[RMDB]
RNA sequence: GGGAACGACUCGAGUAGAGUCGAAAACGCUGGGUCCUCUGAAGCGAGAGACAUGCUGAAGCGCGCACGGCAACAGCUCUCGACCCUUCUAGAGGACCUGUGCUGAAGCGCGCACGGCAACCGAAAGGUGCGAAAUCCCUCCAUUCGUGGAGGGAAAUAUAGCCUCCCUAUUCGUAGGGAGGCUAUAAAAAGAAACAACAACAACAAC
Reactivity to 2A3 in 0.01 (KOAc 150mM, MgCl2 10mM, bicine 150mM(pH8.5), 24C), signal-to-noise 1, nucleotides 027 to 156: c040g000c000u070g000g000g000u010c000c010u000c010u020g020a020a010g040c030g010a010g000a000g050a060c030a250u170g040c000u060g040a230a100g050c000g020c020g000c000a020c000g010g000c050a200a110c060a290g000c010u000c000u020c020g210a300c110c040c010u000u050c100u130a010g030a000g000g000a000c000c000u000g020u010g000c010u130g040a030a010g000c030g000c010g000c000a020c050g040g010c030a070a030c040c000g090a030a030a010g010g000u020g050c020g010a110a050a060u060c000c020c000u030c000c020a060u070u090c300g050u060g030g000a020g020g000g000a000a000a010

Structure probing data (2A3) for a 207-nucleotide construct. For 2A3 the reverse transcriptase was SuperScript II with manganese.